[RMDB]
RNA sequence: GGGAACGACUCGAGUAGAGUCGAAAAUCUACCAGUAGAUGUGGUGAAAGCCGUUGGGAGGCAUUCUUGAUGAUCAUCAGAUGGCCGCCGUUGUUCAUCUCGUACCAGUGACCACCUGCGUUGAGCAACGAUAGAGCUGGUUCGCCAGCUCUAUCGUAAAAGAAACAACAACAACAAC
Reactivity to 2A3 in 0.01 (KOAc 150mM, MgCl2 10mM, bicine 150mM(pH8.5), 24C), signal-to-noise 1, nucleotides 027 to 126: u000c010u040a060c020c010a020g000u120a000g070a110u140g070u030g050g020u050g090a180a050a030g030c000c000g020u080u040g010g020g110a090g110g000c010a050u040u000c010u180u120g040a110u010g000a040u060c060a020u000c040a030g050a090u080g110g000c000c000g000c020c000g030u050u080g090u020u040c040a030u000c020u070c080g070u040a190c020c000a080g050u010g110a070c040c000a020c010c000u030g030c020g060u070u010g020a040g030c010a110
Reactivity to DMS in 0.01 (KOAc 150mM, MgCl2 10mM, bicine 150mM(pH8.5), 24C), signal-to-noise 1, nucleotides 027 to 126: u000c030u010a110c030c050a140g000u020a050g010a040u010g010u000g030g000u000g000a110a100a050g000c040c060g010u000u010g000g040g010a020g030g030c010a040u000u030c040u020u050g040a030u000g010a050u060c070a120u000c030a100g000a050u030g000g060c010c000g060c040c040g010u000u000g000u040u000c100a000u020c000u000c050g010u020a120c040c010a080g000u030g000a090c070c010a010c070c060u000g000c090g000u040u020g020a050g000c200a200